[RMDB]
RNA sequence: GGGAACGACUCGAGUAGAGUCGAAAACGGUUACGCCUUCUUUACCGUUAUCAAGGAAGGUACUCGGCCAUGCUAAGGGAAGCAUUAUUCCUUAGGCGCAUGUCGCCGCCAGCAUGGUGUGUGGGGAAAAAGUAUGCUGGGUUCGCCCAGCAUACAAGACUUCAUUGAUCUUCGGAUCAAUGAAGUCAAAAGAAACAACAACAACAAC
Reactivity to DMS in 0.01 (KOAc 150mM, MgCl2 10mM, bicine 150mM(pH8.5), 24C), signal-to-noise 1, nucleotides 027 to 156: c020g020g020u010u000a020c050g020c010c000u010u000c000u000u000u000a010c030c000g050u010u000a040u000c150a020a040g000g040a020a010g050g040u000a010c100u000c020g010g030c000c000a010u000g020c010u020a190a090g030g000g020a020a110g030c150a130u030u000a160u000u000c000c020u020u000a120g010g030c030g010c030a110u010g000u020c000g040c000c000g040c130c130a030g000c020a030u000g010g000u000g040u000g010u000g020g030g000g020a070a040a080a130a170g000u000a020u000g010c000u000g010g000g020u000u020c300g020c000c000c000a000g050c000a000u000a000c020a040a100
Reactivity to 2A3 in 0.01 (KOAc 150mM, MgCl2 10mM, bicine 150mM(pH8.5), 24C), signal-to-noise 4, nucleotides 027 to 156: c010g010g000u030u030a040c060g010c000c000u010u000c000u010u020u040a040c010c020g220u120u090a050u120c070a020a000g030g000a000a000g000g030u030a040c060u040c020g060g010c010c000a000u000g000c000u060a090a080g010g020g010a030a010g020c090a180u130u090a110u170u110c000c000u030u080a040g010g000c000g010c040a150u260g090u260c020g010c020c000g030c020c020a000g000c010a000u010g000g050u020g030u030g010u040g020g040g010g010a020a100a020a010a010g000u000a000u000g000c010u000g000g010g000u030u030c060g110c010c000c000a000g000c000a000u010a000c000a000a000